An RNA of 177 nucleotides, treated with 2A3 and DMS and read out base by base. Values are in units of 0.01, from 0 to 300, in steps of 10. For DMS the reverse transcriptase was MarathonRT. Reactivities are given for positions 27 through 126. The DMS profile rests on 11,341 reads. 2A3 adducts were read by reverse transcription with SuperScript II with manganese.
RNA sequence: GGGAACGACUCGAGUAGAGUCGAAAAGUCUCCCGAUUCGUCGGGAGACCGAGAAAUUCAGGUCAUUUGCUACCUUUAAGUGCAGCUAGAAAUUCAAAGGAAACACCAUGGCGUUCGCGCCAUGGAACUACUACUCGUUAUUCGUAACGAGUAGUAGAAAAGAAACAACAACAACAAC
Reactivity to 2A3 in 0.01 (KOAc 150mM, MgCl2 10mM, bicine 150mM(pH8.5), 24C), signal-to-noise 8, nucleotides 027 to 126: g010u000c000u000c000c000c000g010a010u040u080c150g030u000c010g060g000g000a020g000a000c000c000g020a020g110a050a170a030u200u140c060a010g000g040u030c050a170u040u110u130g000c010u030a030c020c000u120u180u240a070a030g040u050g030c000a010g010c030u090a050g150a100a130a070u150u100c070a110a080a050g090g020a090a100a020c060a020c020c000a000u000g000g000c010g010u040u040c220g020c000g000c080c000a000u000g000g010a000a000
Reactivity to DMS in 0.01 (KOAc 150mM, MgCl2 10mM, bicine 150mM(pH8.5), 24C), signal-to-noise 8, nucleotides 027 to 126: g000u000c000u000c000c000c000g000a020u000u000c170g030u000c000g020g010g000a010g000a000c010c020g010a100g010a300a080a090u000u000c080a050g010g010u000c080a110u010u000u000g010c030u000a040c020c020u000u000u010a040a040g010u000g010c020a020g010c170u000a090g010a060a080a110u010u000c070a030a070a100g010g010a060a060a080c210a120c010c000a010u000g000g010c000g020u000u010c210g030c010g030c000c010a010u000g000g000a040a080